[RMDB]
RNA sequence: GGGAACGACUCGAGUAGAGUCGAAAAUACACAAGCCACAGCAUAAUUUGAUGUGUGUCCACGUUUCUGCCAAGAGGCAUCAAAGCUUACAGCUAUAUUUAGAAAGCCAUCUGUGGUUGGUGACACAGCCGGACAGAGCGUUCGCGCUCUGUCCGGCAAAAGAAACAACAACAACAAC
Reactivity to 2A3 in 0.01 (KOAc 150mM, MgCl2 10mM, bicine 150mM(pH8.5), 24C), signal-to-noise 1, nucleotides 027 to 126: u300a050c150a080c100a190a000g020c000c000a000c000a040g040c030a000u030a060a200u230u090u100g010a020u000g130u030g000u020g020u040c030c070a050c040g000u000u010u010c000u000g010c000c000a180a000g090a200g080g010c000a000u000c000a010a040a000g000c050u220u180a030c030a010g000c000u080a000u080a010u170u270u010a230g030a030a010a000g010c000c000a070u000c100u000g000u000g000g020u000u000g010g000u030g000a000c000a010c010a000

The record gives the reactivity of an RNA of 177 nucleotides to 2A3. The reactions ran in a buffer of 150 mM KOAc, 10 mM MgCl2 and 150 mM bicine (pH 8.5), at 24 C. Source: RMDB library OK1LIB, as collected in RNAgym.